[RMDB]
RNA sequence: GGGAACGACUCGAGUAGAGUCGAAAAUGCCACUCAUCAGGCAAUCCCCCCAAUGAAGAUUGGAUGUGAUUAGCCAAAACAAUUAAUCGCUCAUCAGGGAUAUCUGGGGAACUCAAUUGAGGGAUUGAACUAUGAAUCAAUUCGUUGAUUCAUAGUUAAAAGAAACAACAACAACAAC
Reactivity to DMS in 0.01 (KOAc 150mM, MgCl2 10mM, bicine 150mM(pH8.5), 24C), signal-to-noise 9, nucleotides 027 to 126: u010g010c010c010a110c110u000c160a070u010c150a100g000g000c020a060a100u000c010c010c060c080c010c020a070a060u010g000a100a070g000a060u000u000g010g000a070u010g020u010g010a050u010u000a090g020c150c090a070a060a100a080c160a070a060u010u000a060a040u000c030g010c060u000c030a030u000c110a120g000g010g000a080u010a050u010c090u000g010g000g000g000a100a080c040u000c060a090a090u010u010g010a050g000g010g000a100u000u000g010
Reactivity to 2A3 in 0.01 (KOAc 150mM, MgCl2 10mM, bicine 150mM(pH8.5), 24C), signal-to-noise 8, nucleotides 027 to 126: u040g020c010c000a040c050u120c030a140u040c070a050g000g000c000a020a060u020c010c000c000c010c000c020a010a030u060g020a050a040g060a090u030u070g030g020a030u070g020u010g050a040u010u050a020g010c010c020a030a130a030a050c020a030a030u060u070a050a020u030c010g010c070u010c010a040u010c020a020g040g010g020a050u050a050u130c080u100g030g000g010g050a030a030c010u020c050a050a180u100u080g010a030g020g040g010a020u030u070g030
An RNA of 177 nucleotides, treated with DMS and 2A3 and read out base by base. It was measured as part of the RMDB library OK2TST. For 2A3, 20,956 sequencing reads were counted. The reactions ran in a buffer of 150 mM KOAc, 10 mM MgCl2 and 150 mM bicine (pH 8.5), at 24 C. As a SHAPE reagent, 2A3 marks flexible, mostly unpaired nucleotides at the ribose 2'-OH.